Chemical mapping of a 177-nucleotide RNA with 2A3 and DMS. 2A3 adducts were read by reverse transcription with SuperScript II with manganese. It was measured as part of the RMDB library OK1LIB. The 2A3 profile rests on 129,003 reads.
RNA sequence: GGGAACGACUCGAGUAGAGUCGAAAAGAUGUCUUCGGCUUGAGAGCGAUACGCGCUCCGUUGUGCUCAUAAUUAUUCGCGUUACGCACGACCGUGUAACAUCCCGGCUCGAGACGAAUCUGGUCGCUCUGUGUGGAGGUUUCGACCUUCACGCGGGAAAAGAAACAACAACAACAAC
Reactivity to 2A3 in 0.01 (KOAc 150mM, MgCl2 10mM, bicine 150mM(pH8.5), 24C), signal-to-noise 9, nucleotides 027 to 126: g050a030u080g020u020c030u040u030c060g030g010c030u080u090g060a060g000a010g140c030g040a050u060a130c070g020c010g000c060u010c030c020g030u030u050g030u030g000c010u010c040a060u070a130a070u130u110a080u080u100c030g000c010g050u020u040a020c020g000c010a010c010g020a020c010c020g020u030g010u050a040a020c010a050u040c020c010c000g030g010c030u040c040g070a070g020a030c030g020a020a050u030c030u030g020g010u020c010g010c030
Reactivity to DMS in 0.01 (KOAc 150mM, MgCl2 10mM, bicine 150mM(pH8.5), 24C), signal-to-noise 9, nucleotides 027 to 126: g010a060u020g000u010c060u000u000c050g000g000c070u000u010g010a110g000a060g010c040g010a220u020a050c120g010c040g010c170u010c060c100g010u010u000g010u010g010c030u010c130a080u020a050a050u020u020a100u020u020c090g010c090g020u000u000a090c110g010c020a060c030g010a050c050c030g010u010g010u000a060a050c050a080u010c020c050c030g000g000c020u000c050g000a110g000a050c030g000a060a070u020c060u010g010g010u000c030g000c110